[RMDB]
RNA sequence: GGGAACGACUCGAGUAGAGUCGAAAAGACAACGAGAGGAGUGACAUAUUCGAUGCCAUGUUCCCUGUCACUCACAUCGCUGGGGAGACUGUUAUACAGCAAGGGAAUGAAGGAGACAACUUAUAUACACCCUCCUUUUAUUCGUAAAAGGAGGGUGAAAAGAAACAACAACAACAAC
Reactivity to DMS in 0.01 (KOAc 150mM, MgCl2 10mM, bicine 150mM(pH8.5), 24C), signal-to-noise 3, nucleotides 027 to 126: g000a140c080a040a040c060g010a060g010a150g010g000a010g030u010g000a020c040a050u020a100u000u010c100g000a100u010g010c140c120a080u010g010u000u000c000c000c000u000g030u000c010a010c000u000c020a070c090a110u000c070g010c020u000g000g000g010g010a090g000a110c030u020g000u010u000a100u000a160c080a020g020c090a050a050g000g000g000a050a080u010g000a050a080g030g010a080g000a070c080a040a050c090u010u010a060u010a100u000a190
Reactivity to 2A3 in 0.01 (KOAc 150mM, MgCl2 10mM, bicine 150mM(pH8.5), 24C), signal-to-noise 2, nucleotides 027 to 126: g060a010c050a020a000c050g060a000g020a070g190g030a010g000u010g000a010c010a000u290a150u110u220c110g090a090u240g140c010c040a060u150g020u000u000c000c000c000u010g020u020c000a000c000u030c030a040c000a030u040c070g000c030u060g000g000g040g000a110g000a010c000u010g040u080u060a140u060a140c000a000g010c030a040a050g040g020g000a020a160u140g020a110a010g060g020a040g030a020c020a040a020c050u150u060a080u010a000u000a250